[RMDB]
An RNA of 177 nucleotides, treated with DMS and 2A3 and read out base by base. The DMS profile rests on 1,870 reads. The reactions ran in a buffer of 150 mM KOAc, 10 mM MgCl2 and 150 mM bicine (pH 8.5), at 24 C. For 2A3, 963 sequencing reads were counted. Source: RMDB library OK1LIB, as collected in RNAgym.
RNA sequence: GGGAACGACUCGAGUAGAGUCGAAAAACAGCCUCAACUCACACAGCUACACACGAUGAGGCGUUGCACUUUCGCGAAACUGGCCGAGUUAAGGAAACCCCUACUUAUAAAUUUCCCCCAAAGGACAAAUGCUGCAUAUCUUCGGAUAUGCAGCAUUAAAAGAAACAACAACAACAAC
Reactivity to DMS in 0.01 (KOAc 150mM, MgCl2 10mM, bicine 150mM(pH8.5), 24C), signal-to-noise 2, nucleotides 027 to 126: a030c050a170g040c000c000u030c060a010a170c080u020c040a070c140a120c130a070g040c010u000a030c190a030c010a050c130g010a090u080g000a070g000g020c010g030u000u090g070c110a070c050u010u030u000c090g040c060g000a030a080a020c030u000g000g000c100c040g030a040g020u000u000a080a020g040g070a060a080a140c120c000c020c040u000a050c070u000u000a140u000a020a060a120u020u010u000c000c000c000c040c050a020a060a090g020g000a110c150a100
Reactivity to 2A3 in 0.01 (KOAc 150mM, MgCl2 10mM, bicine 150mM(pH8.5), 24C), signal-to-noise 2, nucleotides 027 to 126: a000c010a030g030c000c000u100c010a020a050c020u100c060a050c000a000c000a050g030c110u240a080c050a000c000a000c070g090a120u130g080a060g020g000c000g010u020u120g010c000a020c030u010u050u050c030g010c010g050a050a050a020c000u000g050g000c080c000g060a060g060u010u090a050a050g020g040a040a030a020c030c000c000c010u020a110c000u010u040a050u110a170a180a130u040u000u070c000c000c000c000c030a000a100a080g050g020a030c070a090